Structure probing data (DMS and 2A3) for a 177-nucleotide construct. The data come from the RNA Mapping Database (RMDB), library TTRDES. For DMS, 7,015 sequencing reads were counted. The RNA was probed in 150 mM KOAc, 10 mM MgCl2 and 150 mM bicine (pH 8.5) at 24 C.

[RMDB]
RNA sequence: GGGAACGACUCGAGUAGAGUCGAAAAGAUAUGGAGAUUUGGUACUAGCUUGGAUUUACGAUCGGAAACGAUCGUUGUCAGCUAACCACGGAUCUCCUAAGUCAAAAGCACCGGUUCGCCGGUGCAAGGAUAGCCUAUAGUUCGCUAUAGGCUAUCCAAAAGAAACAACAACAACAAC
Reactivity to DMS in 0.01 (KOAc 150mM, MgCl2 10mM, bicine 150mM(pH8.5), 24C), signal-to-noise 6, nucleotides 027 to 126: g010a040u000a300u010g000g010a010g010a030u000u000u010g010g010u010a170c210u000a010g010c010u010u010g030g000a020u010u010u000a000c000g010a000u000c010g000g010a120a070a230c000g000a000u000c000g010u000u000g000u000c010a030g000c000u000a030a080c090c070a070c300g000g000a020u000c000u000c010c000u010a040a150g000u010c030a090a080a190a170g000c000a000c000c000g000g000u000u010c270g030c010c000g000g010u000g000c010a010a030
Reactivity to 2A3 in 0.01 (KOAc 150mM, MgCl2 10mM, bicine 150mM(pH8.5), 24C), signal-to-noise 5, nucleotides 027 to 126: g020a020u090a050u220g010g000a030g010a010u020u070u100g110g050u190a170c080u030a110g040c030u100u290g250g030a130u300u300u300a010c000g000a000u000c000g020g020a070a080a060c020g000a000u000c000g000u000u000g000u000c010a000g010c000u010a030a040c020c020a040c080g060g010a000u000c000u000c000c010u020a120a030g060u010c030a040a030a070a120g000c010a010c000c010g000g050u060u060c300g040c100c000g020g000u000g000c000a000a010